[RMDB]
RNA sequence: GGGAACGACUCGAGUAGAGUCGAAAAUUACUGAACUUAGGCGUCCAUGUUACCAUGUGGGGUAUAUUAUUAUUUAACAAGCCUAUUAAGACUAUUAGAAAGUUUUCCUGAUCACAGGUCUCUCUUCUCUUUGCAGCCUGUCGCUGUAAUGCCGGUAAAUUUAAUACCUAUUCGUAGGUAUUAAAUUAAAAGAAACAACAACAACAAC
Reactivity to DMS in 0.01 (KOAc 150mM, MgCl2 10mM, bicine 150mM(pH8.5), 24C), signal-to-noise 2, nucleotides 027 to 156: u000u010a180c050u000g020a120a070c080u000u000a090g030g030c060g040u010c000c030a040u010g010u000u010a110c080c040a170u010g040u000g030g030g020g000u010a040u000a060u010u000a050u000u000a160u010u000u000a020a080c010a060a110g060c010c010u000a130u000u010a070a120g020a010c010u000a060u010u000a080g010a060a070a170g000u000u000u010u000c020c020u000g000a070u010c060a090c050a090g030g010u000c020u000c030u000c030u000u000c050u000c040u000u000u000g040c060a090g020c050c030u000g020u000c030g010c020u010g010u000a040a100u000g010c070c050g000g000u000a040
Reactivity to 2A3 in 0.01 (KOAc 150mM, MgCl2 10mM, bicine 150mM(pH8.5), 24C), signal-to-noise 1, nucleotides 027 to 156: u140u070a040c010u060g060a130a010c000u020u020a060g030g000c010g080u020c050c000a010u030g010u080u120a070c040c070a080u120g060u090g020g030g020g060u050a060u010a020u150u140a030u180u020a000u050u150u030a020a000c020a050a050g030c010c000u010a010u040u090a010a010g100a030c060u010a020u200u060a030g090a090a130a010g020u000u020u050u060c000c000u030g050a050u130c030a050c020a170g070g000u020c020u050c000u050c000u050u040c030u020c000u070u050u020g000c000a000g020c000c060u160g030u100c090g050c030u010g000u020a040a000u000g030c040c040g030g000u050a000